[RMDB]
RNA sequence: GGGAACGACUCGAGUAGAGUCGAAAAGAUAUGGACCAUGACCACUUUUGACGCCUAGUUCGGAAACGAAGGGCGAUAAGUGGUAUGGUCCUAAGUCAAAACGAUUGAGAGUUCGCUCUCAAUCGAACUAUCUCUAUAGCUUCGGCUAUAGAGAUAGAAAAGAAACAACAACAACAAC
Reactivity to DMS in 0.01 (KOAc 150mM, MgCl2 10mM, bicine 150mM(pH8.5), 24C), signal-to-noise 7, nucleotides 027 to 126: g010a040u000a300u010g000g000a000c000c000a010u000g000a040c000c000a010c000u000u000u010u010g020a220c050g000c000c010u000a120g020u000u000c010g010g000a090a070a160c000g010a030a080g000g000g010c000g000a050u000a010a030g020u010g000g010u000a000u000g000g000u000c000c000u000a000a050g010u010c030a070a070a110a210c010g000a020u000u000g000a010g000a010g010u000u010c270g010c000u000c000u000c000a000a000u000c000g000a040a140
Reactivity to 2A3 in 0.01 (KOAc 150mM, MgCl2 10mM, bicine 150mM(pH8.5), 24C), signal-to-noise 9, nucleotides 027 to 126: g020a000u040a030u100g000g010a000c010c000a010u070g300a130c010c010a030c040u100u170u190u300g200a110c030g010c010c000u190a280g300u040u010c010g030g020a050a030a020c000g000a020a020g020g000g010c020g020a040u070a170a070g010u000g000g000u000a000u000g010g000u000c000c000u010a000a000g010u000c010a000a000a090a180c020g000a010u000u010g000a010g000a000g010u100u180c300g050c100u000c000u000c000a000a000u000c000g000a010a010
The record gives the reactivity of an RNA of 177 nucleotides to DMS and 2A3. The 2A3 profile rests on 27,275 reads. DMS adducts were read by reverse transcription with MarathonRT. It was measured as part of the RMDB library TTRDEL.